[RMDB]
Source: RMDB library OK2TST, as collected in RNAgym. The record gives the reactivity of an RNA of 177 nucleotides to 2A3 and DMS. High DMS reactivity at an A or C suggests that its Watson-Crick edge is free. As a SHAPE reagent, 2A3 marks flexible, mostly unpaired nucleotides at the ribose 2'-OH. The 2A3 profile rests on 1,975 reads. DMS adducts were read by reverse transcription with MarathonRT.

RNA sequence: GGGAACGACUCGAGUAGAGUCGAAAACGCACCGACGCCCAGACCAAGCGCGACAAAGACCAGAUGCGACGGCUGCGCGAUAACGGCGCGAGCGUCAAGGCGUUCGCGGCAACCGUUCUGACCGCGGCUGAACGAUCUACUUCGGUAGAUCGUUCAGAAAAGAAACAACAACAACAAC
Reactivity to 2A3 in 0.01 (KOAc 150mM, MgCl2 10mM, bicine 150mM(pH8.5), 24C), signal-to-noise 1, nucleotides 027 to 126: c040g000c000a040c040c040g060a060c010g010c000c020c010a010g040a050c020c030a110a020g010c000g010c040g050a040c080a030a100a000g050a080c040c040a080g030a130u130g070c050g000a060c070g120g000c040u040g000c000g000c010g000a060u020a020a000c030g040g000c030g010c000g000a000g000c010g010u010c040a010a070g180g000c000g010u020u000c020g000c000g020g000c020a060a030c010c000g010u050u030c080u060g000a030c000c010g020c020g050g000
Reactivity to DMS in 0.01 (KOAc 150mM, MgCl2 10mM, bicine 150mM(pH8.5), 24C), signal-to-noise 3, nucleotides 027 to 126: c110g000c070a070c040c060g000a060c120g020c020c060c040a110g000a110c040c050a110a140g020c070g000c040g010a070c080a070a110a040g010a030c090c020a060g000a070u000g000c040g040a100c120g000g000c010u000g020c000g020c010g020a080u000a020a050c020g000g020c000g000c080g020a030g000c010g020u000c070a080a060g040g010c000g010u000u000c020g040c010g020g000c070a060a290c030c000g010u000u000c090u000g000a270c300c010g020c000g000g020